[RMDB]
RNA sequence: GGGAACGACUCGAGUAGAGUCGAAAAGCAUAGCGUCAAGUUGGUUGACCAGAAGUCAGGUUAGCAAACAGAGUAAAACCAAAAGGUUAGACGCACUCUGUGAAAAAGUACGAAAGUACAAAGAUAACAGUUAUAAUUGCUUCGGCAAUUAUAACUGAAAAGAAACAACAACAACAAC
Reactivity to DMS in 0.01 (KOAc 150mM, MgCl2 10mM, bicine 150mM(pH8.5), 24C), signal-to-noise 3, nucleotides 027 to 126: g000c080a100u010a050g030c010g010u010c020a130a140g000u010u010g020g020u000u010g010a030c020c000a130g020a170a080g020u010c120a050g030g000u000u000a030g020c080a080a110a030c020a020g000a030g020u000a050a070a030a040c000c000a080a080a110a100g000g010u000u000a090g000a050c090g010c050a110c030u000c020u000g000u010g010a100a050a080a050a060g000u000a010c000g020a060a050a150g010u010a000c010a090a020a130g010a080u000a020a190
Reactivity to 2A3 in 0.01 (KOAc 150mM, MgCl2 10mM, bicine 150mM(pH8.5), 24C), signal-to-noise 1, nucleotides 027 to 126: g040c040a080u090a090g020c030g070u040c110a170a140g120u130u070g120g080u010u000g050a030c010c020a030g080a190a040g100u160c080a040g000g010u050u050a030g000c040a020a090a010c010a000g060a000g020u110a000a150a040a120c010c000a190a150a000a050g030g010u020u060a050g010a000c020g020c020a020c000u020c000u000g000u010g040a040a020a130a000a000g010u020a000c000g020a060a010a010g000u000a000c090a010a090a000g110a020u160a180a050

Record summary:
An RNA of 177 nucleotides, treated with DMS and 2A3 and read out base by base. For DMS, 2,484 sequencing reads were counted. As a SHAPE reagent, 2A3 marks flexible, mostly unpaired nucleotides at the ribose 2'-OH. The RNA was probed in 150 mM KOAc, 10 mM MgCl2 and 150 mM bicine (pH 8.5) at 24 C. The 2A3 profile rests on 1,104 reads.